[RMDB]
Description:
Structure probing data (DMS and 2A3) for a 207-nucleotide construct. For DMS, 1,605 sequencing reads were counted. It was measured as part of the RMDB library VIROID. High DMS reactivity at an A or C suggests that its Watson-Crick edge is free.
RNA sequence: GGGAACGACUCGAGUAGAGUCGAAAAUUCGAGCAUGGGCCAAUUCCGAGCGAAGAGUCCGCGGGGGAAGGAUCAGUGCCCGAGAGGGGUAAAGUGGUAAAGAGUAUUGGAACGCCGAGGAGAUGUCUCCCAAGAAGGCCAAAAGAGAAUACAAGAGCAAAUAGGAGAUGUUCGCAUCUCCUAUUUGAAAAGAAACAACAACAACAAC
Reactivity to DMS in 0.01 (KOAc 150mM, MgCl2 10mM, bicine 150mM(pH8.5), 24C), signal-to-noise 1, nucleotides 027 to 156: u010u010c020g000a080g050c030a090u000g010g020g070c020c010a260a190u010u010c020c040g000a070g000c100g020a220a060g000a170g030u000c070c010g060c070g000g000g000g000g000a090a160g000g000a060u000c010a120g040u000g030c070c010c010g000a120g020a080g000g000g000g020u000a080a020a170g030u000g050g050u010a060a040a100g010a150g000u020a100u000u010g050g000a070a100c090g000c070c070g000a110g030g000a120g020a110u000g020u000c060u010c000c000c020a030a140g000a080a060g010g010c040c010a010a030a090a130g000a080g000a090a050u010a100c080a060a140g010a170g000
Reactivity to 2A3 in 0.01 (KOAc 150mM, MgCl2 10mM, bicine 150mM(pH8.5), 24C), signal-to-noise 2, nucleotides 027 to 156: u050u020c020g000a050g040c050a040u100g010g040g040c030c090a040a110u100u050c030c040g040a030g010c050g010a070a060g010a060g090u030c050c010g010c040g000g010g000g000g020a000a040g030g010a010u050c040a010g090u040g150c000c020c030g040a020g010a000g060g050g000g000u090a090a150a060g080u040g010g030u040a050a040a020g080a000g040u080a060u120u140g020g050a070a040c010g050c090c030g030a020g000g010a040g000a020u080g040u040c030u040c040c000c020a000a030g030a010a020g010g000c010c000a020a030a020a010g070a000g010a070a050u130a110c000a090a000g080a020g090